[RMDB]
RNA sequence: GGGAACGACUCGAGUAGAGUCGAAAAAAAUGUAUCAGUCGAAAAAUUAAGUCGCUUAAGACCAGCUUUCAAAAAAGACGGGACAGUUACAGCAGGUAAUGCAUCAGGAAUCAAUGAUGGUGCUGCGACCGCUUUGGUAUUUCGAUACCAAAGCGGUAAAAGAAACAACAACAACAAC
Reactivity to DMS in 0.01 (KOAc 150mM, MgCl2 10mM, bicine 150mM(pH8.5), 24C), signal-to-noise 1, nucleotides 027 to 126: a040a040a030u060g060u000a020u000c040a090g000u030c070g020a090a020a100a200a000u040u060a100a170g060u040c000g000c080u010u000a070a140g000a020c040c000a100g000c030u000u000u000c030a000a030a060a000a030a140g000a060c000g000g010g030a040c030a040g010u030u040a040c050a040g030c010a000g000g010u000a080a060u000g000c000a040u030c020a000g030g030a150a180u030c190a040a130u000g010a050u000g000g030u010g010c000u020g000c070g000
Reactivity to 2A3 in 0.01 (KOAc 150mM, MgCl2 10mM, bicine 150mM(pH8.5), 24C), signal-to-noise 2, nucleotides 027 to 126: a000a000a000u290g000u020a130u010c030a000g100u150c070g030a040a050a050a050a040u170u110a060a000g030u100c010g080c000u120u210a300a020g000a000c000c000a000g070c000u000u090u170c120a010a090a090a000a000a000g120a170c000g080g000g110a000c000a000g000u100u160a120c060a020g000c000a010g040g000u260a080a000u250g190c000a010u010c040a080g150g000a090a000u100c190a020a140u240g020a100u170g010g000u000g000c080u000g000c050g080